[RMDB]
RNA sequence: GGGAACGACUCGAGUAGAGUCGAAAAAUAGUUCCUGCUCUUGAGGGCUGAUUGCGGCACAAAGCCUGCAAUAUCGAACAGAGUAGAGCCUAUCAAGUCUGCGGCAUGAAAAAAAGCGCGAUGUAAGGACUCUAAUAGGAUUCGUCCUAUUAGAGUCAAAAGAAACAACAACAACAAC
Reactivity to 2A3 in 0.01 (KOAc 150mM, MgCl2 10mM, bicine 150mM(pH8.5), 24C), signal-to-noise 9, nucleotides 027 to 126: a000u150a010g020u010u020c000c000u020g010c020u010c010u020u040g030a040g000g010g020c010u010g030a020u010u020g000c000g010g010c030a030c100a210a130a030g010c000c000u010g000c000a010a010u040a070u120c060g060a110a080c060a120g050a020g100u180a030g020a010g020c000c000u250a300u170c010a030a010g050u020c060u090g020c000g050g000c030a070u200g140a090a070a020a010a000a000a030g050c040g010c020g040a030u100g050u160a070a050g090
Reactivity to DMS in 0.01 (KOAc 150mM, MgCl2 10mM, bicine 150mM(pH8.5), 24C), signal-to-noise 8, nucleotides 027 to 126: a080u050a150g010u010u000c000c000u000g010c090u020c000u000u010g010a090g000g010g010c040u010g020a070u000u000g020c020g000g010c010a150c200a130a130a170g000c020c000u040g040c020a020a010u000a090u020c030g000a150a300c150a100g010a050g020u020a060g010a070g010c080c010u010a060u010c030a020a040g000u020c070u030g010c030g000g000c050a050u010g000a000a010a050a090a080a100a120g000c040g010c030g010a080u020g010u010a100a120g000